[RMDB]
RNA sequence: GGGAACGACUCGAGUAGAGUCGAAAAACGGAAGCCUUAGCACUAUGUGCAUUGUAUUUUAAUACGCUGCACCCGUGCUAGUGCCAAUGAUGAUGUCAUUGGUGCGACGUCAUCAAACUGCGGGAAAGCUCCUAUAUGGCAUGGGAUACCAAGCACGGAUACUGGGCGAGUUCGCUCGCCCAGUAUCAAAAGAAACAACAACAACAAC
Reactivity to 2A3 in 0.01 (KOAc 150mM, MgCl2 10mM, bicine 150mM(pH8.5), 24C), signal-to-noise 2, nucleotides 027 to 156: a000c060g060g010a050a000g030c000c010u000u040a000g000c010a000c000u040a050u300g000u000g000c000a000u020u050g000u010a020u000u240u040u130a140a060u000a000c000g000c040u000g000c000a000c000c000c040g000u000g010c010u010a040g000u010g090c020c030a060a010u080g010a020u030g010a000u040g030u040c030a030u030u130g110g000u110g030c000g000a010c000g000u020c010a000u010c020a010a090a130c140u120g060c070g020g020g040a170a060a000g000c000u010c000c000u080a080u030a060u250g080g010c030a030u070g020g000g000a030u070a080c010c010a020a070g000c070a040c060g090